[RMDB]
An RNA of 177 nucleotides, treated with 2A3 and DMS and read out base by base.
RNA sequence: GGGAACGACUCGAGUAGAGUCGAAAAUUUGUGUAUCCAUGCUGUUGUGUCACAACAGAAUCUGGAGCAGCAAUUGAAUCACAAUUCCUUAAACCAACGAAGAAUCACUUGGUUAUAGGCAACACUGUAGUCUGUCCGAUUUCGAUCGGACAGACUAAAAAGAAACAACAACAACAAC
Reactivity to 2A3 in 0.01 (KOAc 150mM, MgCl2 10mM, bicine 150mM(pH8.5), 24C), signal-to-noise 2, nucleotides 027 to 126: u030u030u050g060u000g050u030a120u000c000c000a000u050g010c000u000g000u020u000g060u010g260u300c230a040c000a060a000c000a000g080a050a130u060c050u020g040g000a000g000c020a000g030c000a020a000u000u130g190a040a000u070c050a050c020a150a180u000u000c020c050u010u050a030a030a020c010c000a010a030c080g090a210a120g060a180a070u020c000a060c120u070u010g000g000u010u070a060u000a080g010g000c000a060a020c050a010c230u010g000
Reactivity to DMS in 0.01 (KOAc 150mM, MgCl2 10mM, bicine 150mM(pH8.5), 24C), signal-to-noise 2, nucleotides 027 to 126: u000u000u010g050u000g000u150a300u000c000c000a060u000g000c000u000g000u000u000g000u000g050u000c300a000c010a000a050c040a000g000a000a020u040c080u000g000g010a040g020c300a150g000c070a030a150u030u000g000a210a100u000c110a130c140a060a000u000u020c050c000u000u000a120a050a040c010c010a010a040c200g020a090a210g010a090a130u010c040a100c120u000u000g000g030u000u000a110u000a000g010g000c300a090a000c000a160c240u000g000

The RNA was probed in 150 mM KOAc, 10 mM MgCl2 and 150 mM bicine (pH 8.5) at 24 C.
It was measured as part of the RMDB library OK1LIB.
Values cover nucleotides 27 to 126.